Source: RMDB library OK3TST, as collected in RNAgym. The record gives the reactivity of an RNA of 207 nucleotides to DMS and 2A3. For DMS the reverse transcriptase was MarathonRT. 2A3 adducts were read by reverse transcription with SuperScript II with manganese.

RNA sequence: GGGAACGACUCGAGUAGAGUCGAAAAGGCGACGCGCUAAUCGGCGCGUUCGCGGGCGCGGCGCUCGUCGUCGUCACGUCGAAAGACCUCGGCCUCGCGAAGCGCGCCGCGUACAUGCUCAUCUCGCUCGUGAUGGGCUACCUCGCCGCGCCUGAAACAUGGAAAACACAUUCGUGUGUUUUCCAUGAAAAGAAACAACAACAACAAC
Reactivity to DMS in 0.01 (KOAc 150mM, MgCl2 10mM, bicine 150mM(pH8.5), 24C), signal-to-noise 1, nucleotides 027 to 156: g030g020c000g010a060c030g000c000g040c090u000a110a130u000c060g020g000c020g010c000g020u000u000c010g050c020g030g040g050c010g020c020g020g010c000g050c060u010c060g010u020c030g040u000c020g000u000c000a060c080g010u000c000g000a150a160a200g010a040c030c020u000c070g020g000c050c030u020c030g000c000g010a090a050g020c010g010c050g010c030c020g020c050g000u000a040c090a130u000g000c010u000c010a040u000c010u000c070g020c200u020c100g010u000g010a040u020g010g020g000c000u000a030c050c050u000c040g000c060c000g000c030g000c000c000u010g000a140a080a250
Reactivity to 2A3 in 0.01 (KOAc 150mM, MgCl2 10mM, bicine 150mM(pH8.5), 24C), signal-to-noise 4, nucleotides 027 to 156: g020g020c010g020a210c010g100c020g010c090u100a110a080u130c040g020g000c010g000c000g000u010u000c000g000c000g000g010g010c030g000c010g010g000c020g000c040u060c100g160u090c010g010u000c010g060u070c130a010c100g010u010c010g010a050a080a080g070a100c000c020u050c070g090g000c020c050u150c060g000c000g040a050a040g100c000g010c000g010c000c020g000c010g000u010a060c020a040u130g000c010u000c010a000u000c020u020c030g130c130u160c200g060u060g010a010u010g010g000g000c000u030a040c020c050u060c030g000c020c010g010c000g000c000c000u040g030a110a090a010